[RMDB]
RNA sequence: GGGAACGACUCGAGUAGAGUCGAAAAGAUAUGGAUCUAUAGAUCUUGGAUUUAGGUUUAGGGAUUUCACAUCGGAAACGAUGUGUUUUGUCCCUAAACCUUGUCAGAUUGGGUAGAUCCUAAGUCAGUUCGUUAAAUACUUCGGUAUUUAACGAACAAAAGAAACAACAACAACAAC
Reactivity to DMS in 0.01 (KOAc 150mM, MgCl2 10mM, bicine 150mM(pH8.5), 24C), signal-to-noise 4, nucleotides 027 to 126: g000a060u010a300u020g000g010a020u000c000u000a010u000a300g000a010u000c000u010u010g020g010a010u000u010u000a000g010g020u000u000u000a010g010g000g000a020u010u020u000c010a000c010a010u010c000g000g010a190a140a280c010g010a010u000g010u000g000u000u000u010u020g010u000c000c000c000u000a000a010a000c000c000u000u000g000u010c000a020g010a030u000u000g000g020g020u010a010g010a010u010c000c000u000a060a140g000u000c030a150
Reactivity to 2A3 in 0.01 (KOAc 150mM, MgCl2 10mM, bicine 150mM(pH8.5), 24C), signal-to-noise 2, nucleotides 027 to 126: g050a040u180a070u190g000g000a000u000c020u010a000u020a040g000a000u010c010u140u270g150g020a120u300u300u140a030g020g000u000u020u010a000g030g010g010a020u090u050u070c000a010c020a020u020c000g030g010a010a080a070c020g000a010u000g030u000g040u020u020u070u070g000u000c000c000c040u010a000a000a000c000c010u000u000g000u010c000a010g010a010u030u040g150g170g040u020a010g000a010u010c000c000u020a170a010g100u030c040a010